[RMDB]
Description:
Structure probing data (DMS and 2A3) for a 170-nucleotide construct. The reactions ran in a buffer of 150 mM KOAc, 10 mM MgCl2 and 150 mM bicine (pH 8.5), at 24 C. The DMS profile rests on 13,880 reads. It was measured as part of the RMDB library 15KLIB.

RNA sequence: GGGAACGACUCGAGUAGAGUCGAAAAUUUUGUCGUUAAGAGGCAUACUAUGGAGAAUUAUGAACUAGAGAAGCACUGUUACGACUUGUUACGUGACUGUGAUGCUGUAGCUCCCCAUGAUUUCUUCGAACCAUCGACUUCGGUCGAUGGAAAAGAAACAACAACAACAAC
Reactivity to DMS in 0.01 (KOAc 150mM, MgCl2 10mM, bicine 150mM(pH8.5), 24C), signal-to-noise 2, nucleotides 027 to 129: u010u010u000u000g030u010c040g050u030u060a150a070g010a020g020g030c040a000u000a080c180u040a100u050g030g010a020g020a090a020u060u000a000u000g000a090a190c000u000a020g010a060g010a070a030g050c000a030c030u000g010u000u020a030c030g000a110c000u060u060g010u060u080a070c060g030u000g020a020c020u020g030u030g000a120u000g020c020u010g020u030a000g020c140u020c060c140c050c000a070u030g020a030u030u040u060c010u000u000c000g010a100a130
Reactivity to 2A3 in 0.01 (KOAc 150mM, MgCl2 10mM, bicine 150mM(pH8.5), 24C), signal-to-noise 5, nucleotides 027 to 129: u060u070u030u030g040u020c070g010u040u120a150a010g050a120g100g030c010a040u040a100c080u100a170u210g000g000a010g000a040a030u090u010a060u110g020a040a020c000u020a050g010a010g010a130a000g000c000a000c010u010g010u010u010a000c000g020a050c100u100u140g170u100u120a060c000g000u000g020a000c010u050g000u030g030a050u080g020c040u020g020u050a010g000c010u050c020c020c000c000a020u000g030a080u000u070u040c000u010u000c000g040a050a040